[RMDB]
RNA sequence: GGGAACGACUCGAGUAGAGUCGAAAACAAGGACGUUUCGACGUCCUUGAUAGGACCGCCCUUUUGGGCUAACGCCAUACGGACAGCCGGGUCCACUGCCGAACGCAAACCCCUUCGGGGGUUUGAACAGUCCUUUUAAGUUCGCUUAAAAGGACUGAAAAGAAACAACAACAACAAC
Reactivity to DMS in 0.01 (KOAc 150mM, MgCl2 10mM, bicine 150mM(pH8.5), 24C), signal-to-noise 4, nucleotides 027 to 126: c010a010a000g000g010a010c000g010u000u010u010c200g010a050c010g000u000c000c000u000u000g010a060u000a090g000g000a040c030c030g010c000c000c010u000u010u020u000g030g010g010c010u020a020a070c180g010c040c040a090u010a080c080g000g000a070c050a080g010c040c090g020g020g000u000c020c010a180c100u000g000c020c020g000a220a070c220g010c000a010a010a020c000c000c000c000u010u010c170g010g000g010g020g000u000u000u010g000a050a130
Reactivity to 2A3 in 0.01 (KOAc 150mM, MgCl2 10mM, bicine 150mM(pH8.5), 24C), signal-to-noise 3, nucleotides 027 to 126: c000a000a000g000g000a010c010g010u010u070u150c210g080a000c000g000u010c000c000u000u010g000a000u020a010g000g010a020c020c000g040c020c020c020u150u140u180u290g040g000g010c040u040a090a030c070g050c040c010a070u070a120c020g030g060a060c020a010g020c030c030g110g000g000u000c010c000a010c010u020g000c000c010g040a080a020c090g000c090a010a000a000c020c010c000c020u010u060c050g110g010g010g000g000u010u000u000g000a010a010

Chemical mapping of a 177-nucleotide RNA with DMS and 2A3.
Values cover nucleotides 27 to 126.
The RNA was probed in 150 mM KOAc, 10 mM MgCl2 and 150 mM bicine (pH 8.5) at 24 C.
The data come from the RNA Mapping Database (RMDB), library M2PK50.